[RMDB]
RNA sequence: GGGAACGACUCGAGUAGAGUCGAAAAGAUAUGGAGAUUCCAUGGGCACUCUAAGCAGCGAAGAACAGCACCUCGGAAACGAGGUGCUGGGAGCUGCUUAGUUGCCAGCAUGGAGAUCUCCUAAGUCCUAACUGUAACUGUUCGCAGUUACAGUUAGAAAAGAAACAACAACAACAAC
Reactivity to DMS in 0.01 (KOAc 150mM, MgCl2 10mM, bicine 150mM(pH8.5), 24C), signal-to-noise 3, nucleotides 027 to 126: g000a110u010a300u020g010g000a020g010a030u000u000c000c000a000u000g010g000g010c000a030c260u000c000u000a010a000g010c010a000g020c010g000a120a190g010a140a220c010a010g000c010a010c000c010u000c010g010g000a100a070a300c020g020a020g020g020u000g000c000u010g000g000g010a140g030c000u000g000c000u000u000a000g000u000u000g020c010c010a140g000c030a010u000g010g010a040g010a020u000c000u000c000c000u010a030a090g010u010c040
Reactivity to 2A3 in 0.01 (KOAc 150mM, MgCl2 10mM, bicine 150mM(pH8.5), 24C), signal-to-noise 2, nucleotides 027 to 126: g040a030u180a060u300g000g000a000g000a000u040u000c010c000a010u000g010g000g000c030a040c090u160c000u010a000a010g000c020a000g000c040g280a300a040g050a140a040c000a010g000c000a020c020c000u000c060g060g000a090a070a080c030g040a030g000g000u040g040c030u000g000g000g000a010g000c020u000g030c010u000u000a000g000u000u000g000c000c000a020g180c010a000u010g000g000a090g090a060u000c010u000c000c000u010a120a020g050u020c020